[RMDB]
RNA sequence: GGGAACGACUCGAGUAGAGUCGAAAAGUUUCUAAGUUCGCUUAGAAACAAAUCCAGCGCGGAAACGAACGUGCCUGACCCUAUUCGUUAAAGAUUUACAAAAAACGUUCCUCUUCGGAGGAACGAACUAAACAGAACUGUUCGCAGUUCUGUUUAGAAAAGAAACAACAACAACAAC
Reactivity to DMS in 0.01 (KOAc 150mM, MgCl2 10mM, bicine 150mM(pH8.5), 24C), signal-to-noise 3, nucleotides 027 to 126: g010u000u000u000c000u000a010a020g010u010u030c210g020c010u000u000a010g010a000a000a000c000a030a110a080u010c140c100a190g000c010g020c020g010g000a080a050a060c100g000a050a050c030g010u000g000c030c040u010g000a060c050c020c040u000a110u000u000c030g020u000u010a090a120a150g000a120u030u000u000a100c150a010a040a070a050a060a110c010g010u000u000c000c000u000c000u000u010c150g010g000a020g000g000a000a000c010g010a010a040
Reactivity to 2A3 in 0.01 (KOAc 150mM, MgCl2 10mM, bicine 150mM(pH8.5), 24C), signal-to-noise 5, nucleotides 027 to 126: g010u000u000u000c010u000a000a020g000u010u100c160g030c110u000u010a010g010a010a010a000c000a010a050a000u030c040c020a010g000c020g010c000g000g050a200a060a050c040g020a050a010c000g020u010g030c030c030u100g060a100c000c010c030u060a130u100u110c030g030u040u090a100a100a020g090a150u130u200u220a080c140a000a140a010a020a070a030c010g000u010u000c010c010u020c010u020u050c210g110g000a000g000g000a000a000c000g010a000a000
Chemical mapping of a 177-nucleotide RNA with DMS and 2A3. The RNA was probed in 150 mM KOAc, 10 mM MgCl2 and 150 mM bicine (pH 8.5) at 24 C. 2A3 adducts were read by reverse transcription with SuperScript II with manganese.